[RMDB]
RNA sequence: GGGAACGACUCGAGUAGAGUCGAAAAGAUAUGGAAUCGAAGUGGACAUGCGUUCUCGGAAACGAGACGCAACAGCCACCGAUUCCUAAGUCAAAUCCCAUUUACGCGUUCGCGCGUAAAUGGGAAAGCAGUUAAAUGAGUUCGCUCAUUUAACUGCAAAAGAAACAACAACAACAAC
Reactivity to DMS in 0.01 (KOAc 150mM, MgCl2 10mM, bicine 150mM(pH8.5), 24C), signal-to-noise 2, nucleotides 027 to 126: g000a030u000a240u030g000g010a010a000u000c010g010a200a170g000u000g000g000a080c080a210u010g000c000g000u010u010c000u000c000g000g000a080a040a170c010g000a000g020a030c000g000c000a010a010c260a140g000c000c000a020c000c000g000a000u000u000c000c000u000a020a060g010u000c050a090a090a140u000c000c000c000a000u010u000u000a000c010g010c000g030u000u010c290g030c010g010c000g010u010a000a010a010u010g010g000g010a000a000a040
Reactivity to 2A3 in 0.01 (KOAc 150mM, MgCl2 10mM, bicine 150mM(pH8.5), 24C), signal-to-noise 3, nucleotides 027 to 126: g010a010u030a010u080g000g010a000a010u000c020g030a300a100g040u020g010g050a120c090a190u030g020c000g090u300u130c020u010c000g000g020a040a040a040c010g000a000g000a010c000g010c010a010a000c050a020g080c000c000a000c000c000g010a000u000u000c000c000u010a030a010g000u000c030a040a030a170u040c010c000c000a000u020u000u000a010c000g040c010g000u010u120c300g010c010g000c000g190u000a000a000a000u020g010g020g000a070a000a010